[RMDB]
RNA sequence: GGGAACGACUCGAGUAGAGUCGAAAAACGACCAGUCAUUACGAUGACUGGUCGAAAAUUACCUCACGCCAGUGGGGUAGAGUAGCUGGAAUGGGGGCCAGCUGCUCACUUUAAAAAAAGCGACCAACCAGCUAAUGAACUUCGGUUCAUUAGCUGGAAAAGAAACAACAACAACAAC
Reactivity to 2A3 in 0.01 (KOAc 150mM, MgCl2 10mM, bicine 150mM(pH8.5), 24C), signal-to-noise 2, nucleotides 027 to 126: a000c010g030a010c000c000a000g020u020c000a000u020u100a100c300g160a030u000g000a000c000u000g000g000u000c000g000a000a000a000a000u040u010a010c000c000u000c000a000c000g050c000c000a010g020u000g000g000g000g000u010a000g000a000g000u010a000g000c000u000g000g030a130a140u050g130g020g000g000g030c000c010a000g000c000u000g000c000u000c000a010c030u090u130u100a000a130a020a030a000a000a010g110c040g000a030c000c010a000a040
Source information: Chemical mapping of a 177-nucleotide RNA with 2A3. Source: RMDB library RFM100, as collected in RNAgym. The RNA was probed in 150 mM KOAc, 10 mM MgCl2 and 150 mM bicine (pH 8.5) at 24 C.